An RNA of 177 nucleotides, treated with 2A3 and DMS and read out base by base.
Source: RMDB library OK2TST, as collected in RNAgym.
The RNA was probed in 150 mM KOAc, 10 mM MgCl2 and 150 mM bicine (pH 8.5) at 24 C.
For 2A3 the reverse transcriptase was SuperScript II with manganese.
The DMS profile rests on 2,064 reads.
[RMDB]
RNA sequence: GGGAACGACUCGAGUAGAGUCGAAAAUGGAACCCAUCGCACCCUCGUGGGCUGGAUCCGGCCUGUCGAGUCUGGGGAAUCUGUGGCACUGAUAGCCGCAGGGUGAGUGCGCAGCCACUCGGCGACAUCCUCCUCAGUGAUUCGUCACUGAGGAGGAAAAAGAAACAACAACAACAAC
Reactivity to 2A3 in 0.01 (KOAc 150mM, MgCl2 10mM, bicine 150mM(pH8.5), 24C), signal-to-noise 2, nucleotides 027 to 126: u090g040g010a080a070c040c000c000a040u090c010g000c000a110c020c020c000u030c000g040u070g030g000g020c000u020g070g090a190u020c180c000g020g000c000c000u050g150u130c000g000a010g070u060c110u190g000g000g000g010a000a020u000c020u000g020u030g040g030c020a040c190u130g120a100u180a100g000c000c000g030c010a010g010g000g000u090g030a040g000u030g000c070g000c120a060g060c040c010a030c020u030c000g020g000c010g020a010c000a070
Reactivity to DMS in 0.01 (KOAc 150mM, MgCl2 10mM, bicine 150mM(pH8.5), 24C), signal-to-noise 3, nucleotides 027 to 126: u020g000g010a110a190c000c000c020a160u020c040g030c060a090c050c030c040u000c050g030u010g020g010g000c010u010g000g000a170u000c170c050g040g020c010c010u000g020u000c020g000a080g000u010c110u000g020g000g010g000a110a120u000c010u000g010u000g010g010c010a080c250u000g020a150u000a180g000c010c000g010c050a030g010g010g010u020g010a050g000u000g010c020g030c170a090g000c130c020a040c030u010c030g040g000c010g030a060c220a120